[RMDB]
RNA sequence: GGGAACGACUCGAGUAGAGUCGAAAAACGAGGUACGCCUCGAAAAUAUGACCGGUGUCAUAGCCUCUAGCACACAGACGUCGCGUGGGUUCAACUCCCCCCCUUUUCCGAGGGUAUCGGAAACCAAAAAACACAAUUUGGUUCGCCAAAUUGUGAACAAUCGUCAUAUGUUCGCAUAUGACGAUUGAAAAGAAACAACAACAACAAC
Reactivity to 2A3 in 0.01 (KOAc 150mM, MgCl2 10mM, bicine 150mM(pH8.5), 24C), signal-to-noise 4, nucleotides 027 to 156: a000c010g010a010g010g010u040a030c170g050c020c000u000c010g030a080a040a010a040u120a070u050g030a030c060c060g160g020u140g000u080c030a040u030a050g010c020c020u060c070u110a040g010c030a000c010a000c010a060g110a120c060g040u060c050g020c030g040u090g030g010g000u100u130c060a060a090c070u050c010c000c000c000c000c000c010u020u080u010u000c000c000g000a000g000g010g000u060a010u000c000g000g000a000a000a000c020c010a050a040a000a030a050a010c010a000c010a000a000u010u000u000g020g000u030u020c080g000c040c000a000a000a000u010u000g000u000g000a000a010
Reactivity to DMS in 0.01 (KOAc 150mM, MgCl2 10mM, bicine 150mM(pH8.5), 24C), signal-to-noise 2, nucleotides 027 to 156: a080c010g000a060g010g070u000a070c170g050c010c040u000c020g020a090a090a080a180u000a050u000g000a060c000c010g040g000u000g030u010c030a070u010a070g020c060c010u000c060u010a120g010c060a060c050a190c090a100g040a070c030g020u000c030g010c050g030u000g000g030g000u000u020c100a060a300c080u020c010c000c000c010c000c000c040u000u000u000u000c040c010g030a030g010g020g000u010a060u000c030g010g010a010a080a110c150c040a000a060a060a080a070a150c000a010c000a000a000u000u000u000g020g020u000u000c300g020c000c010a000a000a030u000u000g000u000g000a050a100